Annotation:
This 177-nucleotide RNA was probed chemically with DMS and 2A3. For DMS, 1,904 sequencing reads were counted.
[RMDB]
RNA sequence: GGGAACGACUCGAGUAGAGUCGAAAACUGUGUUCAAACAAUUGUUUGGUGGAGGCGAUGCAGAAUUGCAAUUAACUGAAGCCGAUUAUUUAACAGCUGGUAUUGAUAUUGUGGUACAACCACCGGGUACAAGAUACUGCUUCGGCAGUAUCUUGUAAAAAGAAACAACAACAACAAC
Reactivity to DMS in 0.01 (KOAc 150mM, MgCl2 10mM, bicine 150mM(pH8.5), 24C), signal-to-noise 3, nucleotides 027 to 126: c030u000g020u000g000u000u000c070a040a040a070c040a050a040u000u010g000u010u000u000g010g030u000g000g000a300g010g000c040g000a110u000g000c030a040g010a080a100u000u010g000c020a050a100u010u000a170a070c040u000g010a230a220g010c020c020g010a110u000u000a080u010u000u020a040a030c020a010g000c070u010g010g000u000a080u000u000g010a040u030a100u000u010g020u010g000g000u010a080c190a040a120c020c010a040c010c050g000g000g020
Reactivity to 2A3 in 0.01 (KOAc 150mM, MgCl2 10mM, bicine 150mM(pH8.5), 24C), signal-to-noise 2, nucleotides 027 to 126: c010u100g030u090g000u190u010c040a080a080a010c030a090a120u070u030g090u120u060u130g020g020u030g000g000a070g030g010c050g020a010u030g000c040a010g100a300a110u230u020g020c000a030a070u150u060a120a040c030u030g000a080a000g000c000c000g000a030u000u010a080u060u250u010a060a010c030a000g050c030u030g040g060u120a080u140u030g020a030u040a050u140u080g020u020g010g000u070a060c040a030a070c000c010a050c000c030g000g000g050